[RMDB]
RNA sequence: GGGAACGACUCGAGUAGAGUCGAAAAUGAAACCGGCUAUGGCCCUUCAGGCCUGCCGCAUAUCGGCACAUUCGGUGAAGUGGCGCGCACCUCGAUGGUGCGCCAUGCCUUUCGCAUUUUGACGCAAUAUUUAAAAUCGGUUCGCCGAUUUUAAAUAAAAAGAAACAACAACAACAAC
Reactivity to DMS in 0.01 (KOAc 150mM, MgCl2 10mM, bicine 150mM(pH8.5), 24C), signal-to-noise 6, nucleotides 027 to 126: u000g010a080a140a110c190c020g010g000c070u010a090u020g020g020c000c000c100u010u000c270a130g010g010c010c020u000g030c010c010g010c140a080u010a080u000c060g010g000c040a110c110a110u000u000c100g000g010u000g000a010a050g020u010g010g030c050g020c030g020c010a010c010c010u010c240g010a140u000g020g010u000g000c000g020c030c190a030u000g010c010c010u000u000u010c040g000c020a080u000u000u000u000g000a130c110g010c100a100a130
Reactivity to 2A3 in 0.01 (KOAc 150mM, MgCl2 10mM, bicine 150mM(pH8.5), 24C), signal-to-noise 3, nucleotides 027 to 126: u090g010a050a040a020c050c000g010g010c050u110a080u230g020g010c010c020c000u150u180c060a030g000g010c000c020u020g010c020c010g000c010a090u130a050u180c030g050g000c040a020c020a070u070u030c050g030g000u070g020a040a070g160u080g050g000c010g010c020g000c010a000c010c000u080c080g140a110u100g000g000u000g020c020g000c000c000a040u070g000c000c000u020u020u040c020g000c000a020u010u080u020u120g030a040c050g000c080a060a080